[RMDB]
RNA sequence: GGGAACGACUCGAGUAGAGUCGAAAAACGAGUAAGACGCCGACCCAUCAGUUUUAUCGUACGGUAAGGGCGUACGAUGGCUUUAACGGGUACGGGGGAUCAGGGUUUGAUUCCGGAGAGGGAGCCUACGCUUUGUAGAAUUCGUUCUACAAAGCGUAAAAGAAACAACAACAACAAC
Reactivity to 2A3 in 0.01 (KOAc 150mM, MgCl2 10mM, bicine 150mM(pH8.5), 24C), signal-to-noise 9, nucleotides 027 to 126: a000c060g000a060g090u110a090a050g110a030c050g040c050c020g020a030c000c010c000a030u070c040a010g010u000u010u070u220a010u010c010g000u000a000c010g010g080u050a080a100g170g070g050c000g000u000a000c000g000a010u010g010g000c000u070u050u100a080a040c050g010g000g020u130a170c000g000g000g010g020g010a040u070c050a040g060g020g050u050u120u120g140a140u120u050c030c010g010g010a060g020a020g020g030g000a020g010c010c010u000
Reactivity to DMS in 0.01 (KOAc 150mM, MgCl2 10mM, bicine 150mM(pH8.5), 24C), signal-to-noise 4, nucleotides 027 to 126: a050c080g000a120g020u020a070a070g010a140c050g030c040c010g000a090c000c000c000a080u020c220a030g000u000u010u030u040a020u000c010g010u000a000c000g010g020u070a120a130g030g030g000c010g010u000a000c010g010a020u000g000g000c020u000u020u010a090a090c120g000g010g000u010a070c040g020g000g000g000g000a090u010c080a070g000g000g000u000u020u010g000a120u000u010c030c080g030g000a110g000a130g000g000g000a090g020c090c080u020